[RMDB]
RNA sequence: GGGAACGACUCGAGUAGAGUCGAAAAUCAUACUGGGUAGUAGAUUUUGGGAGUCACGGUCUCUACUAUCUAGUAUGAGCACUACAUGUAGACUAGACUGUGAUUCCCAAAGUCUACAUGUGGUGUAGUAUCUGGUUGUAUUCGUACAAUCAGAUACAAAAGAAACAACAACAACAAC
Reactivity to 2A3 in 0.01 (KOAc 150mM, MgCl2 10mM, bicine 150mM(pH8.5), 24C), signal-to-noise 2, nucleotides 027 to 126: u000c000a000u000a040c000u040g000g000g070u060a040g020u000a000g020a050u030u020u050u100g040g020g010a020g030u020c010a020c040g020g020u000c000u000c000u020a010c010u010a010u020c020u010a000g000u000a030u050g010a020g030c020a010c000u010a000c000a000u020g010u000a000g030a050c040u010a020g010a030c010u040g020u060g060a140u070u070c010c010c010a000a100a000g000u000c000u000a000c000a000u040g010u070g000g000u110g010u100a170
Background: An RNA of 177 nucleotides, treated with 2A3 and read out base by base. The RNA was probed in 150 mM KOAc, 10 mM MgCl2 and 150 mM bicine (pH 8.5) at 24 C. 2A3 adducts were read by reverse transcription with SuperScript II with manganese. Source: RMDB library OK1LIB, as collected in RNAgym.